[RMDB]
RNA sequence: GGGAACGACUCGAGUAGAGUCGAAAAUACUGGCCCGUCAGAGUGGGAAGUGGACCUGUGCUUUACUGCAACUAUUCUUCAGCUGCAAUAGGGCAGGAAGUCGUGAAUAGCAUUCAUUUCAUGCAGUGGAAAAAUAAGGCCAAUUUCAGCUUUAAUCGAUAAGGAACAGGUUCGCCUGUUCCUUAUCAAAAGAAACAACAACAACAAC
Reactivity to 2A3 in 0.01 (KOAc 150mM, MgCl2 10mM, bicine 150mM(pH8.5), 24C), signal-to-noise 3, nucleotides 027 to 156: u150a020c040u060g060g000c000c010c010g020u050c050a020g030a010g060u050g020g060g020a030a030g020u020g010g010a100c010c000u020g000u030g030c030u120u050u090a100c020u020g000c010a090a060c040u020a030u050u020c010u150u070c030a130g010c040u030g000c010a080a200u050a220g030g040g010c000a000g050g000a050a040g090u140c080g080u040g070a020a030u020a030g030c040a020u060u070c000a030u000u150u230c040a010u060g000c000a010g020u010g020g020a010a090a060a020a000u110a080a030g000g000c000c020a010a020u030u020u030c020a010g030c010u130u050u140a140a030u300c180
Reactivity to DMS in 0.01 (KOAc 150mM, MgCl2 10mM, bicine 150mM(pH8.5), 24C), signal-to-noise 2, nucleotides 027 to 156: u020a060c120u000g030g060c000c010c010g010u020c100a080g000a140g010u010g020g040g000a080a100g020u000g000g010a060c040c020u000g050u000g020c040u000u000u010a030c000u000g000c010a070a050c050u010a180u010u010c150u000u000c080a070g030c020u000g000c020a050a040u020a130g040g000g030c020a080g000g000a050a070g020u030c080g050u010g000a030a090u000a070g020c060a300u010u020c050a120u000u000u010c090a090u020g000c010a090g040u000g000g020a010a050a090a070a090u000a040a040g020g020c010c000a010a120u000u000u000c030a100g000c000u000u000u000a030a210u010c100
Chemical mapping of a 207-nucleotide RNA with 2A3 and DMS. DMS adducts were read by reverse transcription with MarathonRT. The reactions ran in a buffer of 150 mM KOAc, 10 mM MgCl2 and 150 mM bicine (pH 8.5), at 24 C. The DMS profile rests on 2,532 reads. It was measured as part of the RMDB library OK3TST.